[RMDB]
RNA sequence: GGGAACGACUCGAGUAGAGUCGAAAAACCAGAGUCUCGGAUGGCAACCUCACAGUGCCAUCGAGAGCGUGUUAUGUAAAUUCAGUAACCCUCCUAUGGCGUAAAUGAUGCGCCACUAGCGAAAGAGCCAACCUUUACUGUUCGCAGUAAAGGUUGGAAAAGAAACAACAACAACAAC
Reactivity to 2A3 in 0.01 (KOAc 150mM, MgCl2 10mM, bicine 150mM(pH8.5), 24C), signal-to-noise 2, nucleotides 027 to 126: a040c030c010a030g010a030g070u030c030u020c070g210g030a030u030g010g000c120a220a080c000c070u150c010a010c010a070g050u010g050c010c000a050u000c020g040a050g000a010g000c030g010u150g020u060u050a080u090g090u170a020a270a180u150u210c060a040g030u010a100a100c030c010c000u100c040c020u050a030u020g020g000c020g030u020a060a110a240u210g210a070u140g050c070g000c050c000a010c010u020a060g040c050g050a030a080a070g140a030g060
Reactivity to DMS in 0.01 (KOAc 150mM, MgCl2 10mM, bicine 150mM(pH8.5), 24C), signal-to-noise 2, nucleotides 027 to 126: a080c020c010a200g020a200g000u000c020u000c020g000g030a060u000g000g010c000a030a050c020c060u010c280a060c220a230g000u000g000c000c000a000u000c000g000a060g000a010g000c110g030u020g020u000u000a040u000g000u000a050a050a180u000u000c090a070g010u000a090a110c020c000c000u000c000c000u000a050u010g010g000c000g030u000a050a030a100u040g000a180u000g000c030g020c000c000a020c170u000a000g000c130g000a060a120a080g000a140g000